Conditions: 150 mM KOAc, 10 mM MgCl2 and 150 mM bicine (pH 8.5), 24 C.
This 207-nucleotide RNA was probed chemically with DMS and 2A3.
The 2A3 profile rests on 1,284 reads.
It was measured as part of the RMDB library RFM130.
For DMS, 2,030 sequencing reads were counted.
For 2A3 the reverse transcriptase was SuperScript II with manganese.
RNA sequence: GGGAACGACUCGAGUAGAGUCGAAAAAUCCUCAGGUUCAUAAGCGUGAUGAUUGGGUGUUCAUGCUCCAUGCAUGACAUGUGCCUCCUUUGAACCUUGUUACGACCUUGGCACAUUACCCAUCUGACGAAAACAUGCUGUCUUCGGACAGCAUGAAGUAUUCUCUCCCCUUCGGGGGAGAGAAUACAAAAGAAACAACAACAACAAC
Reactivity to DMS in 0.01 (KOAc 150mM, MgCl2 10mM, bicine 150mM(pH8.5), 24C), signal-to-noise 1, nucleotides 027 to 156: a010u000c010c000u010c050a000g030g010u000u000c040a100u000a080a060g000c090g000u000g040a180u000g000a160u000u010g000g000g010u010g060u030u000c010a030u010g010c020u010c270c270a210u010g020c010a020u000g000a020c300a180u000g060u000g010c010c030u000c100c050u000u000u000g020a020a020c030c020u010u000g020u010u000a120c150g020a100c100c090u040u010g000g070c010a030c020a140u000u000a100c000c000c000a080u000c000u000g020a300c120g010a140a050a090a150c010a020u000g010c000u000g020u010c010u000u000c300g060g010a020c010a020g000c010a020u000g000a020a130
Reactivity to 2A3 in 0.01 (KOAc 150mM, MgCl2 10mM, bicine 150mM(pH8.5), 24C), signal-to-noise 3, nucleotides 027 to 156: a000u050c000c000u000c020a010g010g000u020u040c000a010u080a300a110g040c160g110u130g130a070u050g010a030u230u260g020g000g010u080g040u070u010c000a000u000g000c020u100c280c140a140u230g030c010a000u000g010a020c000a000u010g000u010g000c010c000u050c030c000u060u050u060g010a010a000c000c000u010u090g080u070u090a070c100g040a090c030c080u050u100g010g000c000a000c010a040u020u250a060c020c010c000a010u000c000u020g110a030c050g050a010a000a030a100c000a010u010g000c000u000g010u020c000u010u040c090g070g000a000c000a000g040c000a000u000g000a000a000

Background
Reactivities are given for positions 27 through 156.